Chemical mapping of a 177-nucleotide RNA with 2A3 and DMS.
The 2A3 profile rests on 42,543 reads.
The RNA was probed in 150 mM KOAc, 10 mM MgCl2 and 150 mM bicine (pH 8.5) at 24 C.
The DMS profile rests on 35,424 reads.
DMS adducts were read by reverse transcription with MarathonRT.

RNA sequence: GGGAACGACUCGAGUAGAGUCGAAAAGCUCGGCUAGUGUGGCGACUCUGCAAGAUCGACGGCAAGCCGUCGCGCUACCGCAGCGAGCCGCAGCGUCAGCACUUGGCUGCCGCGCCGGCCGCAUAGCUCCAAAGAUAGAUUUCGAUCUAUCUUUGGAAAAAGAAACAACAACAACAAC
Reactivity to 2A3 in 0.01 (KOAc 150mM, MgCl2 10mM, bicine 150mM(pH8.5), 24C), signal-to-noise 9, nucleotides 027 to 126: g010c020u010c020g020g000c120u030a010g010u010g000u010g030g010c000g020a020c010u170c200u040g000c030a070a090g060a300u240c130g150a120c040g070g000c010a010a010g010c010c000g000u000c000g000c000g000c010u010a010c000c010g000c040a020g000c000g010a020g000c000c000g010c040a040g010c000g010u010c010a000g000c020a060c260u180u210g300g000c000u010g000c010c000g000c000g010c040c020g010g000c000c010g000c010a070u100a090g040c020
Reactivity to DMS in 0.01 (KOAc 150mM, MgCl2 10mM, bicine 150mM(pH8.5), 24C), signal-to-noise 9, nucleotides 027 to 126: g010c030u000c020g010g010c300u000a020g020u000g030u000g010g010c000g010a020c010u010c170u000g010c010a070a100g010a170u010c180g010a110c240g000g000c030a060a030g010c010c000g020u000c010g000c020g010c010u000a050c030c020g010c200a090g010c010g010a090g010c010c010g020c180a180g010c000g000u000c010a010g000c010a240c220u010u010g010g010c000u000g000c030c010g010c010g000c300c030g000g000c000c020g010c060a080u010a070g010c090